[RMDB]
RNA sequence: GGGAACGACUCGAGUAGAGUCGAAAAUGAUGCUGGCCAUCAGUUUCAACAAAGUAGGCUAUUCCCUGCAGGAGCCUUGAGAUUCAUUGUCUUGAUUUUCUUUUCAUGGCAUCUCCAACUGUGGAUAAAAAUAAAAAGUUUAUGCCCAUCUCAAUUACAUAUAGGAUCAGUUCGCUGAUCCUAUAUGAAAAGAAACAACAACAACAAC
Reactivity to 2A3 in 0.01 (KOAc 150mM, MgCl2 10mM, bicine 150mM(pH8.5), 24C), signal-to-noise 3, nucleotides 027 to 156: u050g010a010u040g000c070u040g070g050c090c040a110u090c050a070g010u030u060u080c050a050a040c070a090a140a070g050u110a040g080g000c010u020a070u040u070c000c000c010u010g050c030a040g010g050a020g080c030c000u030u060g040a020g020a070u140u120c040a030u120u110g050u060c010u050u050g050a120u190u100u060u050c080u060u180u000u020c020a020u050g020g000c020a030u020c020u030c020c040a080a090c080u030g000u080g050g010a030u110a090a110a040a020a020u230a060a130a000a010a020g000u080u090u040a040u090g030c000c010c010a050u010c050u010c080a030a130u060u060a040
Reactivity to DMS in 0.01 (KOAc 150mM, MgCl2 10mM, bicine 150mM(pH8.5), 24C), signal-to-noise 2, nucleotides 027 to 156: u010g030a030u000g020c110u020g030g020c120c030a090u010c010a030g000u000u000u000c000a090a140c060a070a160a120g030u000a060g000g020c030u000a160u000u000c010c020c000u000g010c040a080g040g000a160g030c040c010u010u000g000a130g020a070u010u000c070a090u000u000g010u000c070u000u000g000a190u010u000u000u000c050u030u010u010u000c030a150u010g010g020c020a060u000c110u010c060c030a030a120c050u000g030u010g010g000a090u000a010a060a020a040a110u020a060a060a090a040a070g030u000u000u010a070u000g010c010c000c000a230u000c050u000c010a030a040u000u010a140